[RMDB]
RNA sequence: GGGAACGACUCGAGUAGAGUCGAAAAUUUGAGCUAGGAACGGAAUUUAUGAAGCUUACCAAAGAGAAAGUUUGUCUGUGGACGUUCUCUGAGGGAAUUUUAAAACACAAGACUACACUCGUAGAAAGUCUUACUGGUCUGCUUUCGGACACGGGUUGAUUAUAUAUGACUUCGGUCAUAUAUAAUCAAAAGAAACAACAACAACAAC
Reactivity to DMS in 0.01 (KOAc 150mM, MgCl2 10mM, bicine 150mM(pH8.5), 24C), signal-to-noise 2, nucleotides 027 to 156: u010u030u010g040a140g040c020u000a130g000g010a120a190c060g000g020a060a180u000u000u010a090u010g020a120a060g000c060u000u000a150c020c020a050a230a060g000a030g010a040a020a040g020u010u010u000g020u000c110u000g000u000g010g000a020c010g020u010u000c020u000c000u000g000a300g010g030g000a090a070u000u000u010u000a000a040a040a070c050a060c040a030a190g000a100c000u010a060c060a070c040u010c070g040u010a110g020a070a080a020g010u000c040u000u000a090c030u000g020g010u000c030u000g010c000u000u010u020c050g020g010a100c090a040c010g000g010g030u010u000
Reactivity to 2A3 in 0.01 (KOAc 150mM, MgCl2 10mM, bicine 150mM(pH8.5), 24C), signal-to-noise 5, nucleotides 027 to 156: u050u040u120g020a010g010c020u040a040g030g100a060a070c080g040g070a080a070u120u140u110a130u250g050a090a020g030c030u100u220a060c000c000a000a020a000g010a000g000a000a040a000g000u000u000u000g010u010c010u000g000u010g000g000a010c000g000u010u000c010u010c000u000g010a030g020g020g020a000a010u120u080u060u100a010a010a000a000c010a010c020a140a110g000a000c000u020a010c020a000c010u030c010g010u010a020g030a050a030a010g050u020c050u140u130a100c080u120g040g060u090c030u050g010c000u020u010u040c030g010g030a010c030a010c050g020g000g000u000u030
Description:
Conditions: 150 mM KOAc, 10 mM MgCl2 and 150 mM bicine (pH 8.5), 24 C. The record gives the reactivity of an RNA of 207 nucleotides to DMS and 2A3. The 2A3 profile rests on 4,208 reads. Reactivities are rounded to 0.1 and cut off at 0 and 3. The data come from the RNA Mapping Database (RMDB), library ARCHII. For 2A3 the reverse transcriptase was SuperScript II with manganese.